Chemical mapping of a 207-nucleotide RNA with 2A3.
[RMDB]
RNA sequence: GGGAACGACUCGAGUAGAGUCGAAAAUGCUGAGAUUAAAGGCAUGUGCCAUCACCACCUGAACAACAGCAGCUUUCUAAGGAACCAGUAAGGCACUACAGACUUUUCAUAUAACAUCACCUUCAUUCUCUCACAACUAAUUCUACAAAACAGAUGAGUACGUCGUACGUUUCGACGUACGACGUACAAAAGAAACAACAACAACAAC
Reactivity to 2A3 in 0.01 (KOAc 150mM, MgCl2 10mM, bicine 150mM(pH8.5), 24C), signal-to-noise 2, nucleotides 027 to 156: u110g000c060u010g010a020g020a260u140u100a120a030a010g020g000c070a050u010g030u020g050c000c000a030u050c010a000c110c000a020c000c030u020g070a150a060c010a020a020c020a100g020c000a000g000c000u140u000u000c010u050a090a080g070g000a030a060c040c000a020g010u110a060a040g000g000c050a020c000u030a040c040a060g050a010c030u030u080u080u070c080a040u120a020u060a170a110c080a080u050c010a000c010c010u020u010c040a040u040u010c040u000c020u010c020a060c040a080a110c060u140a130a040u040u010c010u100a190c070a040a130a040a000c060a040g120a100u050g030a030